[RMDB]
RNA sequence: GGGAACGACUCGAGUAGAGUCGAAAAGGUCUGACUUCUAGACCGUGUCUGUACAAAAGGACUCAUGGAACUGCUCGUGUCCCAAGCAUACGUUCCAACAUUUGCUGAAUAAUGGUGACAUCAGCUCCAUGUGCUGUCAGUUCGCUGACAGCACAUGAAAAGAAACAACAACAACAAC
Reactivity to 2A3 in 0.01 (KOAc 150mM, MgCl2 10mM, bicine 150mM(pH8.5), 24C), signal-to-noise 4, nucleotides 027 to 126: g020g000u000c010u020g080a250c090u210u040c090u240a000g000a010c010c000g000u010g020u000c020u040g080u090a140c060a080a110a010a050g020g000a020c010u030c100a090u110g020g000a020a020c020u030g000c020u020c050g060u050g060u040c010c020c010a000a010g040c010a050u100a120c050g020u050u020c000c000a030a010c020a050u140u150u090g000c010u030g040a080a060u170a170a110u110g170g050u140g050a020c020a060u050c010a010g010c000u020c040
Reactivity to DMS in 0.01 (KOAc 150mM, MgCl2 10mM, bicine 150mM(pH8.5), 24C), signal-to-noise 5, nucleotides 027 to 126: g020g010u000c000u000g010a190c240u020u000c120u000a040g010a010c010c010g020u000g010u010c020u000g000u010a120c230a040a080a140a120g000g000a040c040u000c110a090u010g010g000a040a030c030u020g020c300u010c050g010u000g000u000c010c000c000a120a070g010c070a070u000a070c130g000u000u000c050c080a080a210c110a090u000u010u000g000c010u000g010a120a100u000a080a080u000g010g000u000g010a080c090a040u010c030a010g020c010u000c110
The record gives the reactivity of an RNA of 177 nucleotides to 2A3 and DMS. Source: RMDB library OK2TST, as collected in RNAgym. The RNA was probed in 150 mM KOAc, 10 mM MgCl2 and 150 mM bicine (pH 8.5) at 24 C. Reactivities are given for positions 27 through 126. For DMS, 3,513 sequencing reads were counted. As a SHAPE reagent, 2A3 marks flexible, mostly unpaired nucleotides at the ribose 2'-OH.